[RMDB]
RNA sequence: GGGAACGACUCGAGUAGAGUCGAAAAGACCUUCAGUUCGCUGAAGGUCGAUGAUGGUAAGAGAGAUUACCUUCUGUUAAGUGAUAUGGAUAAGAUCUCUCAGUGAACGUGCUUUCGAGCACGUUAAGCAAUGUCUUGUUUUCGAACAAGACAUUGCAAAAGAAACAACAACAACAAC
Reactivity to 2A3 in 0.01 (KOAc 150mM, MgCl2 10mM, bicine 150mM(pH8.5), 24C), signal-to-noise 4, nucleotides 027 to 126: g000a000c000c000u000u000c000a030g000u020u140c160g020c100u010g000a000a000g010g000u000c000g010a000u010g020a010u050g020g090u100a160a020g000a000g000a000g000a000u010u020a030c030c000u030u000c040u030g070u060u100a210a070g150u120g270a110u080a030u230g020g020a030u020a100a080g030a080u000c000u000c000u000c010a000g050u070g160a030a010c000g000u000g000c000u070u080u120c250g040a010g000c020a000c000g000u000u000a020a000
Reactivity to DMS in 0.01 (KOAc 150mM, MgCl2 10mM, bicine 150mM(pH8.5), 24C), signal-to-noise 4, nucleotides 027 to 126: g010a000c000c000u000u000c000a010g020u000u010c210g020c000u000g000a010a000g010g010u000c010g010a040u010g020a120u000g000g010u000a050a140g000a010g000a010g000a020u000u010a050c010c030u000u010c000u000g000u000u010a060a140g020u010g020a090u010a030u000g000g010a050u000a050a040g000a030u010c000u000c000u010c000a230g010u010g010a020a000c000g010u000g000c000u000u000u020c200g010a030g010c000a010c000g000u000u000a010a100

The record gives the reactivity of an RNA of 177 nucleotides to 2A3 and DMS. The RNA was probed in 150 mM KOAc, 10 mM MgCl2 and 150 mM bicine (pH 8.5) at 24 C. It was measured as part of the RMDB library M2PK50. For 2A3, 6,014 sequencing reads were counted.